[RMDB]
RNA sequence: GGGAACGACUCGAGUAGAGUCGAAAAAAAAGGAACAUUGAGGAUAGGCAACAGGAGGUUGCGCCUUCUCAAGAUGACCCUUACGAGGGUUCACAGAAGAACUACAAGGUAAGAAUGUAGUUUGGUCCUAUACACCUGGCUUCGGCCAGGUGUAUAGAAAAGAAACAACAACAACAAC
Reactivity to 2A3 in 0.01 (KOAc 150mM, MgCl2 10mM, bicine 150mM(pH8.5), 24C), signal-to-noise 5, nucleotides 027 to 126: a000a000a000a000g140g020a090a010c040a080u040u070g010a010g040g020a040u020a020g080g080c010a010a000c010a050g300g050a060g300g100u010u020g000c000g020c000c010u030u040c000u000c010a010a020g020a030u060g000a000c000c000c000u020u020a040c240g070a020g040g000g000u160u160c040a040c000a020g280a200a010g020a000a000c000u010a000c000a010a000g070g020u150a170a100g040a090a110u030g010u000a000g010u000u010u020g020g020u040c000
Reactivity to DMS in 0.01 (KOAc 150mM, MgCl2 10mM, bicine 150mM(pH8.5), 24C), signal-to-noise 2, nucleotides 027 to 126: a050a060a060a090g000g000a030a020c040a030u000u010g000a010g000g000a020u000a020g000g000c010a020a010c010a200g040g020a110g010g020u010u000g010c000g010c010c000u000u000c010u010c000a010a020g000a020u000g000a030c010c000c000u000u000a120c140g030a050g010g000g000u010u010c030a010c030a120g000a020a090g000a010a010c000u000a000c020a040a020g000g000u000a060a140g000a040a050u000g020u000a010g000u000u000u000g000g010u010c040
An RNA of 177 nucleotides, treated with 2A3 and DMS and read out base by base.
The reactions ran in a buffer of 150 mM KOAc, 10 mM MgCl2 and 150 mM bicine (pH 8.5), at 24 C.
Source: RMDB libraries RFM100 and RFMREP, as collected in RNAgym.